Structure probing data (DMS and 2A3) for a 207-nucleotide construct. For DMS, 12,700 sequencing reads were counted. Source: RMDB library M2RFPK, as collected in RNAgym. DMS adducts were read by reverse transcription with MarathonRT. Conditions: 150 mM KOAc, 10 mM MgCl2 and 150 mM bicine (pH 8.5), 24 C.

RNA sequence: GGGAACGACUCGAGUAGAGUCGAAAAGCCGAUGAAUUGCCGAGAAACCUGGCUCGAAAUCGUCGACGCAUCGACGACGGUCCUGCCAUGAGACCGUAACGAGGACAUGUCGCCUCGAAUGGCGUCGUAUAACAUGAGUGGUUCGCCACUCAUGUAACAUCCCGAUUAUAUUCGUAUAAUCGGGAUGAAAAGAAACAACAACAACAAC
Reactivity to DMS in 0.01 (KOAc 150mM, MgCl2 10mM, bicine 150mM(pH8.5), 24C), signal-to-noise 4, nucleotides 027 to 156: g010c010c020g010a080u010g010a100a090u010u000g020c050c030g020a140g010a110a090a120c090c080u000g020g000c030u000c020g010a050a090a080u000c010g020u000c000g010a050c080g010c070a120u000c010g030a040c010g010a030c000g020g010u010c000c020u000g020c020c200a060u010g020a090g000a030c010c020g000u000a040a110c040g020a090g010g010a060c060a130u000g010u010c060g010c000c000u000c030g020a070a090u000g010g000c010g010u000c030g020u000a060u000a080a060c010a010u000g010a040g020u000g010g010u000u010c300g020c030c000a010c000u010c010a000u000g020u000a030a140
Reactivity to 2A3 in 0.01 (KOAc 150mM, MgCl2 10mM, bicine 150mM(pH8.5), 24C), signal-to-noise 8, nucleotides 027 to 156: g050c020c010g030a050u090g050a060a210u150u120g030c030c030g030a030g110a100a120a060c060c090u110g060g000c030u030c050g070a090a080a060u030c000g020u010c000g000a040c050g010c130a090u050c020g010a010c000g010a000c000g010g000u000c000c010u060g010c010c000a030u030g020a010g010a080c000c000g010u050a010a010c010g010a000g000g010a010c040a130u230g050u170c120g010c010c000u000c010g010a000a010u020g020g020c010g020u050c040g000u050a100u040a220a020c000a000u000g000a000g000u000g030g010u040u090c170g040c030c000a000c000u000c000a000u000g000u000a000a000